[RMDB]
RNA sequence: GGGAACGACUCGAGUAGAGUCGAAAAGACGUCCUUCGAGAGGUUAUUGUCAGCCUGCUGAUCCUCCAAAAUUAACCGGAUGGCCUUCCUCCGUUUGGACUUAUAAAGCCUCUGAAUGAAUGAGGCACAGCUCAGCCAUCUUCGGAUGGCUGAGCUGAAAAGAAACAACAACAACAAC
Reactivity to 2A3 in 0.01 (KOAc 150mM, MgCl2 10mM, bicine 150mM(pH8.5), 24C), signal-to-noise 1, nucleotides 027 to 126: g070a000c100g010u010c010c000u000u000c000g300a300g000a010g110g040u030u040a060u040u050g000u000c000a000g160c010c000u060g050c110u020g000a010u000c000c010u260c090c000a000a000a000a300u040u050a000a030c040c010g000g000a010u030g020g000c000c010u020u000c000c000u000c000c000g000u110u050u000g000g010a010c000u030u070a140u160a030a060a000g000c000c000u000c000u070g130a080a060u060g080a030a230u140g000a040g000g000c020a000